[RMDB]
RNA sequence: GGGAACGACUCGAGUAGAGUCGAAAAAAGUUUGCGCUAGCAAUUGUUGCGAUCACCUUCACUGUGUUGAUCGGCUUUGGAGUGAUUGCAAUUACACACUAGUCUUGGGUGGUCCUGCAAAUGAAGACUAUAAUCAGUCGUUCGCGACUGAUUAUAGAAAAGAAACAACAACAACAAC
Reactivity to DMS in 0.01 (KOAc 150mM, MgCl2 10mM, bicine 150mM(pH8.5), 24C), signal-to-noise 4, nucleotides 027 to 126: a080a100g000u000u010u010g010c070g010c090u000a060g010c060a090a110u010u010g010u000u000g020c010g000a020u000c000a010c100c060u000u000c070a030c020u010g020u010g010u010u000g010a080u010c170g010g000c010u000u000u010g010g000a070g020u000g010a030u000u000g000c010a040a010u000u000a070c190a090c140a090c040u000a030g000u000c080u000u010g010g000g020u000g000g000u000c020c040u000g010c050a020a020a060u010g020a100a120g010a190
Reactivity to 2A3 in 0.01 (KOAc 150mM, MgCl2 10mM, bicine 150mM(pH8.5), 24C), signal-to-noise 2, nucleotides 027 to 126: a020a000g090u080u060u030g030c050g020c050u050a040g020c040a060a030u120u060g020u040u000g020c010g000a010u000c000a030c020c000u030u040c010a020c040u030g030u010g050u100u210g160a200u180c090g050g020c000u040u010u020g030g060a080g010u050g010a010u000u030g000c000a010a000u040u100a040c090a000c000a000c080u040a010g030u060c030u070u060g060g010g000u070g070g030u010c000c000u030g010c020a050a060a040u120g030a070a030g040a030

An RNA of 177 nucleotides, treated with DMS and 2A3 and read out base by base. Conditions: 150 mM KOAc, 10 mM MgCl2 and 150 mM bicine (pH 8.5), 24 C. DMS (dimethyl sulfate) methylates the pairing face of unpaired adenines and cytosines. For DMS the reverse transcriptase was MarathonRT. It was measured as part of the RMDB library OK2TST.